This 177-nucleotide RNA was probed chemically with DMS. It was measured as part of the RMDB library OK2TRN.

RNA sequence: GGGAACGACUCGAGUAGAGUCGAAAAGCUGCCUCUGACGUCCUUAAGGGUGGUAAAGCGGGUCUCCCCCGGAAACGGGGGCGCGCCUGGCGCUAGCACGGGUAUGCGUGGCGGUCGACCCUGGCCGGACGGAGUACGGUUUCGACCGUACUCCGUCAAAAGAAACAACAACAACAAC
Reactivity to DMS in 0.01 (KOAc 150mM, MgCl2 10mM, bicine 150mM(pH8.5), 24C), signal-to-noise 2, nucleotides 027 to 126: g000c040u000g020c020c020u030c080u000g010a090c080g010u000c000c030u010u010a110a100g000g010g010u000g000g000u000a020a090a140g000c010g020g010g010u000c070u000c020c000c000c000c000g010g020a090a080a100c030g010g000g000g010g010c060g010c120g000c010c010u000g000g030c040g000c070u010a130g020c040a090c070g000g010g030u000a040u000g020c030g010u000g000g010c030g000g000u000c030g000a090c040c010c020u010g000g010c060c070g000
Conditions: 150 mM KOAc, 10 mM MgCl2 and 150 mM bicine (pH 8.5), 24 C.